Chemical mapping of a 207-nucleotide RNA with 2A3 and DMS. It was measured as part of the RMDB library RNAMAK. Conditions: 150 mM KOAc, 10 mM MgCl2 and 150 mM bicine (pH 8.5), 24 C. 2A3 adducts were read by reverse transcription with SuperScript II with manganese. Reactivities are given for positions 27 through 156. For DMS, 2,865 sequencing reads were counted.
RNA sequence: GGGAACGACUCGAGUAGAGUCGAAAACACACGCUUCGGCGUGUGGGAGAGCGUACUACAGUUCGAAGAACACUUUUGUUCGAUGAGGACUCCCAAAUAGGAGUCCGAGAACUUGGUGGGAGAACUGUAUCGCAGAUUGACCGCUUUCGAGCGGUAAAGAAUUCUUUUAUUUCGAUAAAAGAAUUCUAAAAGAAACAACAACAACAAC
Reactivity to 2A3 in 0.01 (KOAc 150mM, MgCl2 10mM, bicine 150mM(pH8.5), 24C), signal-to-noise 2, nucleotides 027 to 156: c010a000c000a010c020g020c020u040u110c240g150g000c000g000u000g010u020g010g060g030a170g000a000g010c000g010u040a150c060u010a010c040a000g010u000u010c030g100a300a050g010a080a040c010a000c000u250u300u210u170g000u010u000c040g130a250u280g090a070g000g000a000c000u030c000c010c000a300a270a030u300a070g000g010a010g000u000c000c010g010a060g000a020a000c000u010u020g020g000u010g000g030g010a020g000a010a000c000u030g030u010a010u300c000g000c010a000g010a040u040u130g050a020c010c000g010c020u040u180u140c280g080a020g000c010g000g020u000a010a000
Reactivity to DMS in 0.01 (KOAc 150mM, MgCl2 10mM, bicine 150mM(pH8.5), 24C), signal-to-noise 2, nucleotides 027 to 156: c000a040c000a040c010g010c010u000u010c300g080g030c000g040u000g040u030g000g010g020a140g000a170g010c000g030u010a090c100u000a010c020a010g020u020u010c000g000a220a250g000a230a200c010a020c020u000u000u000u010g000u000u000c000g020a180u000g030a300g020g010a040c000u010c000c000c030a060a170a300u020a050g000g010a010g020u000c020c010g000a130g000a000a030c020u000u000g010g000u000g010g000g000a270g020a010a020c010u010g000u000a010u010c010g020c000a120g000a170u030u000g000a040c010c000g000c010u000u000u010c280g020a060g020c010g020g010u000a000a090